This 177-nucleotide RNA was probed chemically with 2A3.

RNA sequence: GGGAACGACUCGAGUAGAGUCGAAAAGAAAGAAAGAAAGAGCUGGGCAACAUAGCGAGACCUCAACUCUACAAUUUUUUUUUUUUUAAUUUUAGAGACGGGGUCUUGCUCUGUUGCCAGGCUUUAAGACCGUAUUAGAAUUCGUUCUAAUACGGUCAAAAGAAACAACAACAACAAC
Reactivity to 2A3 in 0.01 (KOAc 150mM, MgCl2 10mM, bicine 150mM(pH8.5), 24C), signal-to-noise 1, nucleotides 027 to 126: g080a050a070a000g090a030a110a000g030a060a160a010g050a000g000c020u050g040g010g000c000a000a000c000a010u000a000g000c000g000a000g000a000c000c010u010c010a070a160c010u000c000u000a000c010a000a000u010u000u010u020u010u000u010u030u020u000u000u150u300a000a010u000u000u010u000a000g000a000g000a000c090g010g010g000g000u000c000u000u000g010c010u000c000u010g000u000u010g000c010c000a000g010g000c000u020u020u020a040a000